[RMDB]
RNA sequence: GGGAACGACUCGAGUAGAGUCGAAAACGUGAAGUUACGGCACACGUCCUCAGGAAUUGGCACCGGUCCACCGAGAGCGCGGGCACCCCAAACGAUUUGUGCGGUGCGCUCAACAAGGGCGGUGACGCCAAUAGAACCCGUUCGCGGGUUCUAUUGGAAAAGAAACAACAACAACAAC
Reactivity to 2A3 in 0.01 (KOAc 150mM, MgCl2 10mM, bicine 150mM(pH8.5), 24C), signal-to-noise 6, nucleotides 027 to 126: c020g020u040g080a130a080g040u090u090a080c130g050g040c030a020c010a010c060g040u050c010c010u060c040a050g090g120a100a130u130u130g060g000c010a010c030c020g100g090u030c030c020a040c050c040g080a060g000a000g080c000g000c000g020g040g000c020a010c020c030c010c030a080a250a060c120g110a160u100u070u300g010u010g000c010g030g190u020g000c000g000c000u010c000a010a060c050a080a090g000g010g000c000g010g000u000g000a010c000g020
Reactivity to DMS in 0.01 (KOAc 150mM, MgCl2 10mM, bicine 150mM(pH8.5), 24C), signal-to-noise 6, nucleotides 027 to 126: c020g020u010g010a100a110g010u000u000a110c120g010g010c070a150c020a040c020g000u010c030c020u010c130a110g000g000a070a100u000u010g020g010c020a050c040c030g010g020u000c020c020a090c160c070g010a230g010a010g010c010g030c010g020g010g000c020a010c010c140c030c060a050a090a110c160g010a130u000u010u000g020u000g000c020g000g010u010g010c010g020c000u000c000a040a110c260a080a070g010g010g010c010g000g020u000g000a040c100g000

This 177-nucleotide RNA was probed chemically with 2A3 and DMS.
For DMS the reverse transcriptase was MarathonRT.
The DMS profile rests on 7,312 reads.
The RNA was probed in 150 mM KOAc, 10 mM MgCl2 and 150 mM bicine (pH 8.5) at 24 C.
It was measured as part of the RMDB library OK2TRN.